[RMDB]
RNA sequence: GGGAACGACUCGAGUAGAGUCGAAAAGGGCAGCUCAAGAGCUCAGAGCAGGAGCACGUCAAGGCCUUGCUUGCACAGUAUCAGCGAGAGGAGGGCGCUCCAGAGGUUGAGCAGCCAUCGUCCUCUGCGCUAGAGCGAUAUUCGUAUCGCUCUAGCGAAAAGAAACAACAACAACAAC
Reactivity to 2A3 in 0.01 (KOAc 150mM, MgCl2 10mM, bicine 150mM(pH8.5), 24C), signal-to-noise 2, nucleotides 027 to 126: g020g020g030c000a030g030c030u030c030a040a000g050a060g090c030u020c080a070g020a010g060c080a040g010g080a130g040c070a050c150g120u100c110a080a090g090g050c020c020u000u010g010c010u010u050g000c010a070c020a120g110u160a110u300c060a040g000c000g030a010g010a000g120g000a020g020g040g000c000g000c000u020c010c010a080g030a030g150g030u070u080g000a010g030c010a010g000c010c010a040u070c020g050u000c000c000u010c030u060g040
Reactivity to DMS in 0.01 (KOAc 150mM, MgCl2 10mM, bicine 150mM(pH8.5), 24C), signal-to-noise 3, nucleotides 027 to 126: g000g020g020c020a040g000c030u000c030a030a070g000a160g010c030u000c060a120g010a060g020c080a110g040g000a100g020c030a090c120g010u000c110a090a150g010g010c030c010u000u010g000c040u000u000g000c050a090c170a120g010u010a160u010c140a100g000c020g010a020g000a030g030g000a080g000g000g010c040g000c020u000c000c040a300g000a060g000g000u000u000g010a020g020c000a050g010c010c010a040u000c070g000u000c010c010u000c080u010g010